Record summary: Structure probing data (DMS and 2A3) for a 177-nucleotide construct.
RNA sequence: GGGAACGACUCGAGUAGAGUCGAAAAGGAGUGGGUCUUCCCUGGCACCCCAGUGUGCAAGGACAGUGGAGACCUGAUUAUACAGGUAUGUUUAUAAUGCUGUACUGUUAAUGCUGCAAAUAAACGGCCUCAAGUUUCGGUUCGCCGAAACUUGAGGAAAAGAAACAACAACAACAAC
Reactivity to DMS in 0.01 (KOAc 150mM, MgCl2 10mM, bicine 150mM(pH8.5), 24C), signal-to-noise 1, nucleotides 027 to 126: g010g010a050g040u010g000g010g020u000c000u000u010c010c000c000u000g020g030c050a020c000c020c180c190a110g020u000g040u000g000c030a140a120g000g020a300c090a010g020u000g030g000a020g010a010c000c020u000g010a020u000u010a040u040a060c250a040g030g020u000a040u030g030u000u040u000a020u000a100a170u000g020c000u000g000u000a060c260u000g010u000u000a040a190u010g000c030u000g010c050a060a170a020u030a000a020a020c000g000g010
Reactivity to 2A3 in 0.01 (KOAc 150mM, MgCl2 10mM, bicine 150mM(pH8.5), 24C), signal-to-noise 1, nucleotides 027 to 126: g160g050a100g060u080g000g000g000u000c020u020u070c040c040c000u000g070g000c000a060c020c060c000c000a070g030u090g020u010g220c060a110a080g070g040a030c020a020g050u030g140g000a010g000a010c040c000u000g000a000u000u300a110u120a100c100a000g050g020u170a090u270g030u030u000u000a130u000a090a110u050g020c020u040g010u050a050c050u030g130u300u080a050a000u120g030c010u010g020c020a030a030a030u060a010a040a020c020g000g010

Record summary:
Source: RMDB library OK2TST, as collected in RNAgym. The reactions ran in a buffer of 150 mM KOAc, 10 mM MgCl2 and 150 mM bicine (pH 8.5), at 24 C.